RNA sequence: GGGAACGACUCGAGUAGAGUCGAAAAAUAGCCCUGGGUAUAGUAACAAUGUUGAAUAUGACUCUUAAUUGAGGAAAUGGGUGAUCCGCAGCCAAAUCCUAAGGACAUUUUAUUGUCUAUGGAUGCACCUUUUAGCAAUGUUCGCAUUGCUAAAAGGAAAAGAAACAACAACAACAAC
Reactivity to 2A3 in 0.01 (KOAc 150mM, MgCl2 10mM, bicine 150mM(pH8.5), 24C), signal-to-noise 1, nucleotides 027 to 126: a000u110a020g110c010c010c000u020g030g030g000u080a100u010a140g130u080a010a060c010a140a090u190g050u130u060g100a000a080u160a050u110g000a050c000u000c000u030u090a110a080u300u010g050a000g000g090a040a080a060u100g000g000g010u000g020a020u010c020c050g060c050a000g050c090c030a000a210a040u000c000c000u050a090a050g010g040a000c000a020u110u300u140u170a270u300u030g000u080c000u000a020u030g010g000a000u030g000c030a050
Reactivity to DMS in 0.01 (KOAc 150mM, MgCl2 10mM, bicine 150mM(pH8.5), 24C), signal-to-noise 2, nucleotides 027 to 126: a130u010a150g010c000c010c000u000g000g010g020u000a070u000a040g020u000a090a040c030a060a060u010g000u000u000g020a070a040u000a020u000g000a120c020u010c000u000u010a070a200u000u000g010a070g010g000a040a090a050u010g000g010g020u000g010a090u000c020c020g030c090a130g000c050c140a050a080a050u000c000c010u020a050a160g000g000a020c020a000u010u010u020u000a120u010u010g000u000c000u000a300u000g000g000a020u000g020c070a100